[RMDB]
RNA sequence: GGGAACGACUCGAGUAGAGUCGAAAACGUUAGUAACCGCGAGUGAACGCGAUACAGCCCAAACCGAAGCCCUCACGGGCAAUGUGGUGUCAGGGCUACCUCUCAUCAGCCGACCGUCUUCACGAAGUCUCUUGGAAUAGAGCGUGAUACAGGGUGACACUACCAAAUAGUUCGCUAUUUGGUAGUGAAAAGAAACAACAACAACAAC
Reactivity to 2A3 in 0.01 (KOAc 150mM, MgCl2 10mM, bicine 150mM(pH8.5), 24C), signal-to-noise 8, nucleotides 027 to 156: c010g010u010u010a010g000u010a030a010c040c050g090c210g130a130g070u010g020a030a000c000g010c010g020a060u050a160c070a020g010c010c000c000a040a030a020c030c010g070a040a010g020c010c010c000u100c030a060c070g000g000g000c060a010a040u110g040u110g010g020u020g100u110c150a140g000g010g000c000u000a010c000c010u020c010u010c020a130u020c030a040g110c020c030g060a090c010c040g050u040c090u040u030c010a020c020g050a140a090g130u020c010u000c010u020u060g080g110a070a050u100a140g010a000g000c010g000u010g000a010u020a050c050a050g010g050g020u020g010a010
Reactivity to DMS in 0.01 (KOAc 150mM, MgCl2 10mM, bicine 150mM(pH8.5), 24C), signal-to-noise 5, nucleotides 027 to 156: c050g010u000u000a120g020u000a070a050c010c020g020c060g000a200g030u000g010a080a100c070g020c010g000a130u010a080c080a090g010c010c010c010a060a110a110c020c020g000a260a260g020c010c000c000u010c260a150c280g080g010g020c030a010a020u000g060u000g020g020u000g000u030c070a130g010g010g010c020u000a030c030c020u000c020u000c030a070u000c040a110g010c010c060g000a050c020c020g000u010c060u000u000c020a050c040g020a110a110g010u010c010u000c010u010u020g020g020a120a120u010a030g000a060g020c010g010u010g020a080u000a050c060a110g010g020g020u010g010a220